[RMDB]
RNA sequence: GGGAACGACUCGAGUAGAGUCGAAAACGGGCUUGCGGCCCCAUGCUCCGGCCGGAUAAAGGUGAUGUCGUUAUUAGCCAUUAAUAUGCAGUUCUCAUGUUGAUACUGAAUGCUUCACGUUUAGGACCACACAGAUUCGGUUCGCCGAAUCUGUGUGAAAAGAAACAACAACAACAAC
Reactivity to DMS in 0.01 (KOAc 150mM, MgCl2 10mM, bicine 150mM(pH8.5), 24C), signal-to-noise 1, nucleotides 027 to 126: c160g020g000g000c060u000u000g020c110g010g040c080c010c050c050a040u010g030c090u000c070c090g010g020c010c080g010g000a100u010a080a060a090g000g000u000g000a080u000g000u000c030g010u010u000a110u000u020a050g010c040c090a070u010u000a050a100u000a010u010g010c130a090g010u010u000c090u000c060a080u000g010u010u000g010a070u000a150c040u040g000a050a050u020g000c060u010u000c050a060c060g020u000u000u000a070g030g040a140c190